[RMDB]
This 177-nucleotide RNA was probed chemically with 2A3 and DMS.
It was measured as part of the RMDB libraries RFM100 and RFMREP.
For 2A3 the reverse transcriptase was SuperScript II with manganese.
The reactions ran in a buffer of 150 mM KOAc, 10 mM MgCl2 and 150 mM bicine (pH 8.5), at 24 C.
DMS adducts were read by reverse transcription with MarathonRT.
Reactivities are given for positions 27 through 126.
RNA sequence: GGGAACGACUCGAGUAGAGUCGAAAAUCUCCGCUCUCCCCGCACAGGAGAGCGGACCGAGGCUCCGGCACUCUCUGCCCUGACUGCGCCGGUGCCUCCAGUGGCCGGGGGCACCGCACACCGCCGGUGAAUCUACUAGGUUCGCCUAGUAGAUUCAAAAAGAAACAACAACAACAAC
Reactivity to 2A3 in 0.01 (KOAc 150mM, MgCl2 10mM, bicine 150mM(pH8.5), 24C), signal-to-noise 5, nucleotides 027 to 126: u030c010u000c000c000g000c000u010c000u010c010c010c020c050g170c040a090c030a030g000g010a000g000a000g000c000g000g000a010c010c030g020a010g010g010c050u030c080c010g000g000c010a020c010u050c000u010c050u070g050c000c000c010u060g070a100c050u090g040c030g030c100c040g020g000u000g000c000c000u000c000c000a060g030u140g090g030c050c020g020g000g000g000g010c000a010c000c010g010c010a020c010a010c010c060g030c000c000g000g010
Reactivity to DMS in 0.01 (KOAc 150mM, MgCl2 10mM, bicine 150mM(pH8.5), 24C), signal-to-noise 5, nucleotides 027 to 126: u040c130u000c000c000g010c000u000c000u010c000c000c040c110g020c230a110c220a250g000g000a010g000a020g030c030g000g000a000c160c100g000a040g000g000c060u010c000c010g000g010c010a200c050u000c030u010c080u010g010c030c020c030u010g000a080c130u020g000c060g010c120c020g000g000u000g000c000c000u000c010c000a070g010u020g000g000c040c040g000g010g000g000g000c000a000c010c000g000c040a050c070a090c180c050g030c020c010g000g000